Structure probing data (2A3) for a 177-nucleotide construct. It was measured as part of the RMDB library RFM100. The RNA was probed in 150 mM KOAc, 10 mM MgCl2 and 150 mM bicine (pH 8.5) at 24 C.
RNA sequence: GGGAACGACUCGAGUAGAGUCGAAAAACGGACGUCACUUCCUUCUUGUUACUUAAAUUGCUGGGGGGCUCCCAACACCUGGACUUUUGGCACCACGAGGUCAACACCCUGAUUACAAAAGCCUUAGCGAUAUCGGCUGUUUCGACAGCCGAUAUCGAAAAGAAACAACAACAACAAC
Reactivity to 2A3 in 0.01 (KOAc 150mM, MgCl2 10mM, bicine 150mM(pH8.5), 24C), signal-to-noise 2, nucleotides 027 to 126: a000c030g060g010a030c060g090u040c050a010c030u080u030c010c000u030u000c050u020u100g140u150u070a060c000u020u130a000a110a120u200u180g030c050u040g000g000g000g000g000g060c020u010c020c000c010a030a060c000a010c020c010u030g000g060a050c010u040u060u010u130g010g010c020a000c030c000a040c010g020a030g020g100u030c010a010a030c000a050c020c000c000u050g020a090u000u050a080c120a000a080a010a000g020c000c000u070u080a030g080

Background:
2A3 adducts were read by reverse transcription with SuperScript II with manganese.